[RMDB]
RNA sequence: GGGAACGACUCGAGUAGAGUCGAAAAUGUAAACACGAUAUCGACAACGUGGAAUUGUUUGAGAUAUGUUUAGAGAAUGCUAAUAUAGACUCUGUAGACUUUAAUGGAUAUACACCUCUUCAUUAUGUAUCAUGCCGCAAUAAAUAUGAUUUUGUAAGGUUGAUAUGUAGUUCGCUACAUAUCAACCAAAAGAAACAACAACAACAAC
Reactivity to DMS in 0.01 (KOAc 150mM, MgCl2 10mM, bicine 150mM(pH8.5), 24C), signal-to-noise 2, nucleotides 027 to 156: u000g030u000a050a090a060c000a040c050g000a090u000a170u000c020g000a120c050a040a080c030g010u040g030g040a120a110u010u000g020u020u000u010g050a120g010a140u000a020u000g010u000u010u000a030g010a100g050a100a110u010g010c060u000a040a120u010a130u010a120g020a120c000u040c020u000g010u010a130g000a060c050u000u000u000a060a060u000g010g010a120u000a110u010a090c070a050c060c060u000c080u000u000c040a090u000u000a100u000g020u000a050u000c050a080u000g010c030c010g040c080a070a080u000a040a070a090u000a080u020g000a140u000u000u010u000g000u010a070a270
Reactivity to 2A3 in 0.01 (KOAc 150mM, MgCl2 10mM, bicine 150mM(pH8.5), 24C), signal-to-noise 4, nucleotides 027 to 156: u140g010u070a030a060a010c030a020c040g100a100u030a020u120c030g040a030c040a060a020c050g030u100g090g040a080a100u090u100g080u050u050u090g070a050g020a020u030a050u060g030u020u060u090a020g000a010g040a120a040u070g010c020u030a070a050u120a120u020a130g040a030c020u000c010u060g030u040a020g040a050c030u130u100u060a040a010u080g030g010a020u030a010u050a210c040a070c010c010u040c010u090u030c050a040u050u130a070u210g030u010a040u070c010a020u040g040c000c020g040c030a010a090u080a110a100a000u200a110u050g100a140u040u070u050u040g090u080a120a000